[RMDB]
RNA sequence: GGGAACGACUCGAGUAGAGUCGAAAAUAGCCAAACCACACAUCAUAAAGAAAACCACCACAAUCAAAAUCGGUAACUAUCAGCUUUCAGGGGGUCUCAGGUUAUCAUGACGAUCGGGGUAAAGGAUGUACUUUCUAACUUUCGAGUUAGAAAGUACAAAAGAAACAACAACAACAAC
Reactivity to DMS in 0.01 (KOAc 150mM, MgCl2 10mM, bicine 150mM(pH8.5), 24C), signal-to-noise 3, nucleotides 027 to 126: u010a060g040c020c010a030a040a120c080c020a060c030a090c050a090u030c040a080u040a070a050a130g000a080a060a090a060c070c030a040c030c030a070c110a110a030u010c050a040a030a060a040u010c070g000g000u020a080a060c070u020a050u020c060a040g000c040u000u000u020c120a060g000g000g020g000g020u000c020u000c040a020g000g000u000u000a050u000c030a070u010g000a150c090g030a070u000c040g000g000g010g020u010a050a060a090g010g000a080u010
Reactivity to 2A3 in 0.01 (KOAc 150mM, MgCl2 10mM, bicine 150mM(pH8.5), 24C), signal-to-noise 6, nucleotides 027 to 126: u140a010g010c000c000a060a010a020c020c000a030c010a010c010a090u110c020a030u140a130a120a020g120a050a070a020a010c050c020a030c010c000a030c050a050a060u130c050a010a060a030a140u080c050g040g010u030a020a020c010u030a050u160c030a010g040c020u030u170u100c040a050g030g000g000g010g070u000c020u000c020a000g000g030u000u040a040u070c040a040u160g040a030c060g030a020u040c050g020g000g010g020u050a050a060a010g090g000a010u070